The data come from the RNA Mapping Database (RMDB), library TTRINS. Structure probing data (DMS) for a 177-nucleotide construct.
[RMDB]
RNA sequence: GGGAACGACUCGAGUAGAGUCGAAAAGAUAUGGACCUGCCCCUGGAUAAGCUCAACAGCUUACGUAACAUCUACUCGGAAACGAGUAGUGGUAAGACAUGAGCGUAACAGGGGCAGGUCCUAAGUCCUAAAGUAACACGUUCGCGUGUUACUUUAGAAAAGAAACAACAACAACAAC
Reactivity to DMS in 0.01 (KOAc 150mM, MgCl2 10mM, bicine 150mM(pH8.5), 24C), signal-to-noise 8, nucleotides 027 to 126: g010a100u000a240u000g020g000a010c000c000u000g010c000c010c010c000u000g000g010a100u000a090a300g010c000u000c000a030a110c300a270g000c000u000u000a010c010g010u000a060a090c230a030u010c000u000a010c000u000c000g010g000a100a100a210c010g010a010g010u000a000g010u000g010g010u000a000a010g000a060c090a300u000g000a010g020c000g020u000a100a170c000a010g000g020g000g010c000a000g010g010u000c000c000u000a000a070g000u010c030